[RMDB]
Chemical mapping of a 207-nucleotide RNA with 2A3 and DMS.
The reactions ran in a buffer of 150 mM KOAc, 10 mM MgCl2 and 150 mM bicine (pH 8.5), at 24 C.
For 2A3 the reverse transcriptase was SuperScript II with manganese.
It was measured as part of the RMDB library RNAMAK.

RNA sequence: GGGAACGACUCGAGUAGAGUCGAAAACCACCUUCGGGUGGAUCUCCUCCUAAGUCAUCGUCGUUGAAACAGACACGCAGUGACGCACAUCGGAAACGAUGUGUAUCAGCGUGAUCUGUGGAGACGAUGAUAUGGAAAUCAGGUAAUUCGUUACCAAUUUGUAAGUUGUGUUCGCACAACUUACAAAAAAAGAAACAACAACAACAAC
Reactivity to 2A3 in 0.01 (KOAc 150mM, MgCl2 10mM, bicine 150mM(pH8.5), 24C), signal-to-noise 5, nucleotides 027 to 156: c000c000a010c010c010u050u090c300g120g000g010u020g020g030a080u030c070u020c030c010u050c010c000u090a170a050g020u010c000a000u000c010g010u000c010g280u300u070g010a020a020a000c000a000g000a000c000a000c000g000c020a230g120u020g100a020c020g010c000a000c000a000u010c010g010g060a070a060a040c010g000a000u010g000u000g000u000a020u030c000a010g000c000g010u020g050a300u020c000u000g000u000g000g000a020g000a000c000g000a000u000g000a000u000a010u040g000g050a070a060a080u290c160a130g000g010u010a050a020u080u150c210g070u100u020a000c010c000a030a120
Reactivity to DMS in 0.01 (KOAc 150mM, MgCl2 10mM, bicine 150mM(pH8.5), 24C), signal-to-noise 2, nucleotides 027 to 156: c020c010a020c020c030u000u000c300g050g020g010u020g000g020a030u000c030u000c010c050u000c010c000u000a160a300g000u000c010a010u000c020g000u000c020g050u000u000g020a300a220a050c030a010g000a080c000a020c000g070c000a180g010u000g030a020c000g000c000a000c010a010u000c000g000g030a300a100a300c000g000a000u000g000u000g000u000a000u000c000a070g000c000g050u000g010a030u010c000u000g000u000g000g000a300g000a000c000g010a000u000g000a000u000a090u010g020g000a050a100a120u010c030a150g010g010u000a020a100u000u000c190g000u000u000a040c000c030a070a300